[RMDB]
RNA sequence: GGGAACGACUCGAGUAGAGUCGAAAAUUCGGUUCUUCCGCAGUACGUCGCAGCUUCGAGUCCUGUAUCAGGAGCCUUCUCAAGCUUUGCCGCGCAUGGGAUUACUGCGGAUUUCGGGGUUUUUAACUACGGACUAGUUAUUCGUAACUAGUCCGUAAAAAGAAACAACAACAACAAC
Reactivity to 2A3 in 0.01 (KOAc 150mM, MgCl2 10mM, bicine 150mM(pH8.5), 24C), signal-to-noise 4, nucleotides 027 to 126: u070u020c010g070g020u060u080c030u140u020c010c000g000c000a000g000u010a020c020g020u000c020g010c020a000g000c000u050u150c190g020a020g040u040c000c000u040g040u200a160u250c060a010g000g030a030g020c010c040u250u050c000u010c000a020a020g010c000u160u170u130g020c060c050g020c010g000c080a170u210g050g050g100a030u100u060a010c010u000g000c000g000g020a000u010u010u030c010g000g000g000g000u000u000u010u040u110a070a040c030
Reactivity to DMS in 0.01 (KOAc 150mM, MgCl2 10mM, bicine 150mM(pH8.5), 24C), signal-to-noise 3, nucleotides 027 to 126: u000u010c000g010g040u020u010c050u010u010c000c000g030c000a020g010u000a020c100g010u010c300g010c030a060g010c000u020u000c100g020a040g010u020c000c020u000g010u050a140u020c090a010g010g000a090g010c100c150u000u050c010u000c040a010a030g000c000u000u040u020g030c040c050g040c040g000c080a140u010g010g020g000a070u030u000a010c000u000g000c000g000g000a020u000u000u000c040g000g010g030g020u000u000u010u010u030a040a190c160
An RNA of 177 nucleotides, treated with 2A3 and DMS and read out base by base. For 2A3, 2,194 sequencing reads were counted. It was measured as part of the RMDB libraries RFM100 and RFMREP.